The data come from the RNA Mapping Database (RMDB), library M2RFPK. An RNA of 207 nucleotides, treated with 2A3 and DMS and read out base by base. As a SHAPE reagent, 2A3 marks flexible, mostly unpaired nucleotides at the ribose 2'-OH. The RNA was probed in 150 mM KOAc, 10 mM MgCl2 and 150 mM bicine (pH 8.5) at 24 C. Values cover nucleotides 27 to 156. For DMS, 3,728 sequencing reads were counted.
RNA sequence: GGGAACGACUCGAGUAGAGUCGAAAAGACAAUCCAGGGAACCGGAUGUCAUCACGUUGUUGCAGUACCAGAUGGCAUCUUAAAUCCGAUCUGCAAAUAAUCAUGUAGAAAGCUGAUGUGGGCUUUAAAAACGUGGUGCUGUUCGCAGCACCACGAACAUUCUAUGAUACUUCGGUAUCAUAGAAUGAAAAGAAACAACAACAACAAC
Reactivity to 2A3 in 0.01 (KOAc 150mM, MgCl2 10mM, bicine 150mM(pH8.5), 24C), signal-to-noise 2, nucleotides 027 to 156: g060a000c050a020a120u060c020c060a070g080g020g020a070a070c070c040g000g000a010u010g010u000c000a010u000c020a030c160g050u020u030g060u070u050g090c090a050g060u100a070c060c020a040g000a000u000g000g000c000a010u000c000u010u030a040a060a020u020c010c040g040a070u010c000u000g000c010a020a110a000u130a110a060u220c110a070u140g030u060a040g080a120a060a010g010c050u050g060a120u150g110u100g080g000g030c010u050u110u140a000a040a030a040a060c020g010u000g000g000u010g000c000u010g030u040u050c180g010c040a000g000c000a000c010c000a000c000g010a000a000
Reactivity to DMS in 0.01 (KOAc 150mM, MgCl2 10mM, bicine 150mM(pH8.5), 24C), signal-to-noise 2, nucleotides 027 to 156: g000a120c020a090a130u020c000c030a080g030g030g020a120a070c080c170g000g000a020u000g030u000c000a020u000c030a220c180g020u000u000g000u000u000g000c000a100g020u010a030c040c010a120g040a050u010g010g020c030a030u010c010u010u010a030a100a160u010c040c030g010a130u000c030u020g000c040a050a100a140u000a120a100u020c100a150u000g000u000a070g020a040a080a160g020c010u000g010a130u000g020u010g010g030g010c020u010u010u030a030a040a050a070a080c010g050u000g020g020u000g030c050u000g040u000u000c270g030c000a050g010c010a010c010c000a000c010g010a020a100